[RMDB]
RNA sequence: GGGAACGACUCGAGUAGAGUCGAAAAAUACAUACUGACACCGGUUGCUCAACAGGCUGUGUGGGACAAUAGAAUAACAAGGCUGUCCAUUUGAGCUUGACGGCUGCAAACCGAAUGGAGUGAAAUCGUAACCGGACUCACUUCGGUGAGUCCGGAAGUUGUGAAGAGUGUUCGCACUCUUCACAACAAAAGAAACAACAACAACAAC
Reactivity to 2A3 in 0.01 (KOAc 150mM, MgCl2 10mM, bicine 150mM(pH8.5), 24C), signal-to-noise 1, nucleotides 027 to 156: a000u080a000c040a040u230a030c010u040g060a020c000a050c050c000g020g110u000u000g030c110u060c090a040a050c010a050g070g000c020u010g060u010g000u080g170g060g020a000c030a010a030u070a140g110a140a060u080a140a040c090a100a000g130g090c020u050g000u000c000c010a030u070u020u080g110a000g010c000u010u020g040a030c040g110g020c120u030g020c030a020a020a030c000c010g100a130a080u120g050g000a040g010u060g060a070a060a030u110c030g010u010a000a040c010c000g000g010a020c000u000c000a020c000u000u090c120g000g000u000g000a000g000u000c030c000g000g000a010a000
The record gives the reactivity of an RNA of 207 nucleotides to 2A3. The 2A3 profile rests on 480 reads. The reactions ran in a buffer of 150 mM KOAc, 10 mM MgCl2 and 150 mM bicine (pH 8.5), at 24 C.